[RMDB]
RNA sequence: GGGAACGACUCGAGUAGAGUCGAAAAGCCAAUGACUUUGGGUAAAUUCUGCGGCCUUGACGCCGCAGCGGCGUUAGCGGCACUCACUUACCCGAAUCACUGACUAAUGUCAGCUCAUCGGGACGCGCGAGUGAGGUCAAUUCGUUGACCUCACUCGAAAAGAAACAACAACAACAAC
Reactivity to DMS in 0.01 (KOAc 150mM, MgCl2 10mM, bicine 150mM(pH8.5), 24C), signal-to-noise 2, nucleotides 027 to 126: g000c000c010a040a150u000g010a060c140u000u000u000g020g010g000u000a010a030a120u000u000c040u000g000c050g000g010c020c080u000u000g010a110c170g030c000c000g020c040a010g010c160g000g020c020g060u000u000a060g010c150g000g030c030a090c060u000c060a040c130u000u000a090c000c000c000g000a020a040u000c120a110c010u000g000a010c000u010a070a160u000g000u000c030a050g040c040u000c130a230u000c000g000g010g040a100c170g000c080g010
Reactivity to 2A3 in 0.01 (KOAc 150mM, MgCl2 10mM, bicine 150mM(pH8.5), 24C), signal-to-noise 3, nucleotides 027 to 126: g020c020c000a010a100u080g030a050c060u070u050u060g070g020g010u200a090a150a120u200u010c040u070g010c010g000g020c020c000u090u260g060a060c060g000c010c010g020c020a000g010c020g050g000c020g010u000u050a040g000c050g040g020c010a050c040u040c010a060c030u070u090a070c000c000c010g020a020a050u050c020a020c040u010g020a000c020u210a300a080u300g010u030c000a000g010c030u020c020a080u040c020g010g010g060a060c060g030c010g020